Structure probing data (2A3 and DMS) for a 177-nucleotide construct. Conditions: 150 mM KOAc, 10 mM MgCl2 and 150 mM bicine (pH 8.5), 24 C. 2A3 adducts were read by reverse transcription with SuperScript II with manganese.
[RMDB]
RNA sequence: GGGAACGACUCGAGUAGAGUCGAAAAUAUCGGUGGCGGUGUCGCGCUGGACGCGGCUGUGUUCGGUGGCGACGUUGCAUUGUACGCGAGUGCGCGCGUGGCUGCGUCUGGGGGCGCUGUGCUGCGCAGCACUCGAUCCUUUCGAGGAUCGAGUGCUAAAAGAAACAACAACAACAAC
Reactivity to 2A3 in 0.01 (KOAc 150mM, MgCl2 10mM, bicine 150mM(pH8.5), 24C), signal-to-noise 9, nucleotides 027 to 126: u250a030u060c060g050g030u050g070g020c020g000g030u040g010u030c010g000c020g010c030u020g020g010a010c010g040c020g220g180c300u280g020u010g010u020u020c020g030g040u050g200g020c000g000a020c010g010u010u030g000c010a020u040u170g060u100a050c070g020c030g090a050g080u110g060c050g000c000g000c010g030u020g030g000c020u020g000c000g010u020c030u130g090g010g040g020g000c010g000c030u060g070u090g040c010u010g000c020g000c020
Reactivity to DMS in 0.01 (KOAc 150mM, MgCl2 10mM, bicine 150mM(pH8.5), 24C), signal-to-noise 6, nucleotides 027 to 126: u050a080u010c050g010g000u010g000g030c020g000g010u010g010u000c020g000c010g010c000u010g000g000a020c020g010c020g020g020c200u060g030u010g010u000u000c020g000g020u010g010g030c010g000a020c010g010u020u010g000c040a100u020u020g010u020a060c070g010c040g010a090g010u010g000c050g010c080g010c020g020u000g000g020c020u000g000c020g010u000c020u000g010g010g010g000g000c020g010c010u010g010u010g010c010u000g000c030g010c060